[RMDB]
RNA sequence: GGGAACGACUCGAGUAGAGUCGAAAAUCGCAAAACCGCGGCAAGUGGAGUUAGCGAAAGGAGGCUGGGUUUUGGCUUCCUUAAGCAAUCGGUCACCGAGAAGGUGUGGUCGUUACCGUGAAAUUCCGUGACAAAAUAACGUUCGCGUUAUUUUGAAAGGAGUAAGUUGAUUCGUCAACUUACUCCUAAAAGAAACAACAACAACAAC
Reactivity to DMS in 0.01 (KOAc 150mM, MgCl2 10mM, bicine 150mM(pH8.5), 24C), signal-to-noise 2, nucleotides 027 to 156: u010c040g040c030a090a050a060a130c050c050g040c060g010g040c030a050a100g000u000g010g010a100g010u000u000a220g020c000g010a190a050a040g000g000a000g010g010c000u010g040g030g030u010u000u020u020g030g010c000u000u000c010c010u000u000a020a300g010c020a100a060u000c030g000g010u000c030a130c010c000g000a180g000a110a140g010g020u000g030u000g020g010u000c020g000u000u000a030c010c020g020u000g000a110a080a150u000u010c010c020g010u010g000a220c040a010a010a030a010u010a020a020c010g020u000u010c300g000c040g020u010u000a000u000u000u000u000g010a060a110
Reactivity to 2A3 in 0.01 (KOAc 150mM, MgCl2 10mM, bicine 150mM(pH8.5), 24C), signal-to-noise 4, nucleotides 027 to 156: u060c010g000c010a050a040a040a060c040c020g000c020g060g020c110a140a060g020u090g050g040a100g020u110u100a020g020c010g000a070a020a010g010g000a000g010g000c030u090g100g130g100u120u080u170u220g050g010c000u000u000c000c000u000u010a030a000g010c000a020a080u050c010g000g000u020c010a000c020c030g060a060g110a210a070g100g010u120g010u030g100g020u020c000g060u040u070a070c040c000g000u030g060a060a080a080u090u010c030c030g060u090g040a010c010a000a010a000a000u000a000a000c010g010u020u040c240g010c000g090u010u000a000u000u010u030u010g050a120a060

Background
The record gives the reactivity of an RNA of 207 nucleotides to DMS and 2A3. Values cover nucleotides 27 to 156. 2A3 adducts were read by reverse transcription with SuperScript II with manganese. The RNA was probed in 150 mM KOAc, 10 mM MgCl2 and 150 mM bicine (pH 8.5) at 24 C. For DMS the reverse transcriptase was MarathonRT.